[RMDB]
RNA sequence: GGGAACGACUCGAGUAGAGUCGAAAAUCGACCAAUCUUCGGAUUGGUCGAAGAGCCGAAAUAGCUCAGUUGGGAGAGCGUUAGACUGAAGAUCUAAAGGUCCCUGGUUCAAUCCCGGGUUUCGGCACCAGGUCGACAUUCAUUUCGAUGAAUGUCGCCAAGGGUCUCAAUUCGUUGAGACCCUUGGAAAAGAAACAACAACAACAAC
Reactivity to 2A3 in 0.01 (KOAc 150mM, MgCl2 10mM, bicine 150mM(pH8.5), 24C), signal-to-noise 3, nucleotides 027 to 156: u010c000g000a000c000c000a000a000u010c000u020u070c140g060g000a000u000u000g000g000u000c000g000a000a000g000a000g000c000c000g000a000a010a000u020a010g000c010u000c020a040g050u230u270g140g100g030a030g000a000g000c010g000u010u010a010g000a030c030u100g080a170a040g080a300u010c000u010a010a010a020g030g010u010c010c000c000u010g020g000u030u050c000a000a010u000c010c010c020g000g000g010u000u000u000c000g000g000c000a010c010c010a020g020g120u060c010g000a000c000a000u010u000c000a000u010u060u170c220g090a010u010g000a000a000u000g000u000c000g000
Reactivity to DMS in 0.01 (KOAc 150mM, MgCl2 10mM, bicine 150mM(pH8.5), 24C), signal-to-noise 2, nucleotides 027 to 156: u000c000g000a030c010c000a010a020u000c020u000u010c300g010g000a030u000u020g030g000u000c000g000a000a030g000a110g040c000c020g010a060a100a090u000a090g000c000u000c000a120g010u020u000g010g010g030a090g010a010g030c000g000u010u010a060g010a030c000u020g020a160a210g000a300u000c000u010a020a100a060g000g000u000c020c000c000u000g010g040u010u000c040a120a300u000c050c010c030g020g030g020u000u000u000c030g000g030c040a090c050c000a080g000g030u010c000g010a000c000a020u000u000c010a010u000u000u000c240g020a040u010g020a000a000u000g000u010c000g010
This 207-nucleotide RNA was probed chemically with 2A3 and DMS. DMS adducts were read by reverse transcription with MarathonRT. The DMS profile rests on 2,772 reads. For 2A3 the reverse transcriptase was SuperScript II with manganese.